[RMDB]
RNA sequence: GGGAACGACUCGAGUAGAGUCGAAAAUCCGUUGUCUUCGGACAACGGAAAAGAAGGGCGGACACAAAAGCACGAGCUCGCCGUGACGCGCAAAGGCGAUAAAAAGCUCAAACUUCGGUUUGAGCAAGGUAGUAACGCAGUUCGCUGCGUUACUACCAAAAGAAACAACAACAACAAC
Reactivity to DMS in 0.01 (KOAc 150mM, MgCl2 10mM, bicine 150mM(pH8.5), 24C), signal-to-noise 1, nucleotides 027 to 126: u000c000c000g000u000u000g000u000c000u000u010c270g020g000a010c010a000a000c020g000g010a000a000a040a120g000a070a140g010g000g040c040g000g000a040c060a020c140a050a060a090a050g020c020a060c070g010a240g000c050u010c040g000c000c090g020u000g000a110c070g010c050g040c090a100a090a140g000g000c010g010a120u020a060a090a110a050a100g000c000u000c000a020a000a010c000u000u020c170g110g030u000u000u000g000a010g000c010a000a000
Reactivity to 2A3 in 0.01 (KOAc 150mM, MgCl2 10mM, bicine 150mM(pH8.5), 24C), signal-to-noise 1, nucleotides 027 to 126: u000c000c000g000u010u000g000u000c000u050u070c200g100g000a020c000a000a000c000g000g000a030a060a000a040g060a020a070g050g060g020c050g030g050a020c030a000c010a050a120a020a030g090c010a030c080g000a020g020c000u020c020g020c000c020g010u010g030a060c060g040c000g000c100a070a100a050g040g010c010g000a000u160a020a080a000a010a010g010c000u000c000a000a000a010c010u040u030c210g060g020u020u010u030g010a010g010c020a000a010
An RNA of 177 nucleotides, treated with DMS and 2A3 and read out base by base. For DMS, 848 sequencing reads were counted. The data come from the RNA Mapping Database (RMDB), library M2PK50. The reactions ran in a buffer of 150 mM KOAc, 10 mM MgCl2 and 150 mM bicine (pH 8.5), at 24 C. The 2A3 profile rests on 1,788 reads. 2A3 adducts were read by reverse transcription with SuperScript II with manganese.